[RMDB]
RNA sequence: GGGAACGACUCGAGUAGAGUCGAAAAGUUAUGCUCUCGCUGCCUAAUGGCGGUGCGGGAAACCCACUCUAAAGUCCUUAGGCUUAGCCCCUUAAGGCGGGGUUCGGAGGCACCUGGCAACAGAAGCUGAAACUGUGCACAUUCGUGUGCACAGUAAUAUUGGAUCUGGGUUCGCCCAGAUCCAAUAAAAAGAAACAACAACAACAAC
Reactivity to 2A3 in 0.01 (KOAc 150mM, MgCl2 10mM, bicine 150mM(pH8.5), 24C), signal-to-noise 1, nucleotides 027 to 156: g000u100u020a020u300g020c000u000c000u000c020g000c000u020g000c000c060u300a300a250u290g000g000c000g100g090u050g050c020g000g030g000a140a000a000c020c030c000a100c010u200c030u080a120a060a300g300u050c000c000u010u010a000g000g000c000u010u100a030g020c000c050c000c030u070u170a000a000g000g000c000g000g010g010g010u000u060c160g080g030a050g030g010c000a000c000c000u100g300g000c000a000a000c000a060g000a000a000g000c000u000g140a100a050a090c010u000g000u000g010c020a000c000a000u040u140c190g070u050g000u000g030c000a000c000a000g000u000a000a010